[RMDB]
RNA sequence: GGGAACGACUCGAGUAGAGUCGAAAAAAAGUGUACGAAAGAACAAAGAAGCAAUCAAACCGAGUAGUGAAAUGAUGGCUUCAGUCCAAAAUGGGCAAACACUUCAGACGGAGCCAAAGGCAAUUAACAAGUUCAGCUUAUUCGUAAGCUGAACUUGAAAAGAAACAACAACAACAAC
Reactivity to DMS in 0.01 (KOAc 150mM, MgCl2 10mM, bicine 150mM(pH8.5), 24C), signal-to-noise 2, nucleotides 027 to 126: a060a000a080g000u000g000u000a080c070g000a070a050a080g010a120a120c100a030a080a060g000a030a030g000c030a020a000u030c020a030a100a090c130c010g030a110g020u000a080g010u000g020a050a070a100u000g000a070u020g010g000c000u000u010c000a080g040u000c000c030a020a030a090a130u010g000g040g010c100a060a070a060c020a000c050u000u000c130a070g010a080c040g010g000a050g000c010c040a010a030a070g030g000c080a030a020u010u020a070a180
Reactivity to 2A3 in 0.01 (KOAc 150mM, MgCl2 10mM, bicine 150mM(pH8.5), 24C), signal-to-noise 2, nucleotides 027 to 126: a020a000a000g060u070g040u050a060c040g060a020a050a060g030a100a020c030a030a130a000g070a020a000g020c030a030a010u000c020a080a020a040c060c050g060a080g070u220a020g000u070g060a040a100a150u070g000a010u040g020g000c020u000u050c020a030g000u000c010c010a100a140a020a270u120g000g020g000c020a060a010a000c000a000c010u070u030c020a030g030a090c060g040g040a030g010c010c040a070a000a020g040g040c010a040a090u130u030a030a100